[RMDB]
RNA sequence: GGGAACGACUCGAGUAGAGUCGAAAAUGUUAGAAAACAUGAGACAAAAGUAAUCUUCUUGAUGCUAGCGUCUCAGGUAAUUAGCAGGUACUAGACAGUACCUGCUAAUUACUAUAUGUUUAGUAAAAAUCCCUUAAUUCUUCGGAAUUAAGGGAUUAAAAGAAACAACAACAACAAC
Reactivity to DMS in 0.01 (KOAc 150mM, MgCl2 10mM, bicine 150mM(pH8.5), 24C), signal-to-noise 8, nucleotides 027 to 126: u020g010u000u010a090g010a110a020a010a010c010a040u000g000a020g010a010c000a060a300a150a020g010u000a030a050u000c000u010u050c220u050u040g000a010u000g010c010u000a020g000c300g000u000c000u000c000a140g000g010u000a000a000u000u010a000g010c010a000g000g000u000a000c000u010a100g010a120c230a110g000u000a000c000c000u010g000c000u000a000a000u000u000a010c000u000a050u050a040u000g000u000u000u010a100g000u020a010a070a080